[RMDB]
RNA sequence: GGGAACGACUCGAGUAGAGUCGAAAACAGAUGGAUAGAGCCACCAGGAAAAACGCCAAUCUGGACCUCAUUGGUGAGAAAGCACCUUUUUGCUUUCACUUCACUGAUAUAGAGGAGAUGACUGCGACACUGCACAAAGAUUCGUCUUUGUGCAGUGAAAAGAAACAACAACAACAAC
Reactivity to 2A3 in 0.01 (KOAc 150mM, MgCl2 10mM, bicine 150mM(pH8.5), 24C), signal-to-noise 2, nucleotides 027 to 126: c030a010g050a080u060g040g010a030u050a190g100a020g030c020c000a060c020c060a090g030g020a060a090a030a000a000c020g020c020c000a020a110u020c020u010g070g080a060c000c000u010c020a040u010u030g030g000u020g010a050g020a010a010a000g000c000a020c000c000u080u110u040u230u080g000c010u020u010u010c020a040c060u090u080c010a010c000u000g070a010u050a010u060a180g020a000g050g020a030g020a020u090g020a030c050u050g020c020g050a010
Reactivity to DMS in 0.01 (KOAc 150mM, MgCl2 10mM, bicine 150mM(pH8.5), 24C), signal-to-noise 4, nucleotides 027 to 126: c040a060g010a040u000g000g000a070u010a060g000a160g000c050c030a090c130c050a060g020g010a040a040a040a080a120c080g000c020c050a050a060u000c030u010g000g010a270c010c000u000c040a050u000u000g020g040u000g000a050g010a010a000a000g020c000a060c300c150u000u000u000u010u000g010c000u000u000u000c010a140c270u010u010c010a010c000u010g000a020u000a150u000a100g020a030g000g010a110g000a120u000g000a050c060u000g010c070g020a210
Structure probing data (2A3 and DMS) for a 177-nucleotide construct. For DMS the reverse transcriptase was MarathonRT. It was measured as part of the RMDB library OK2TST.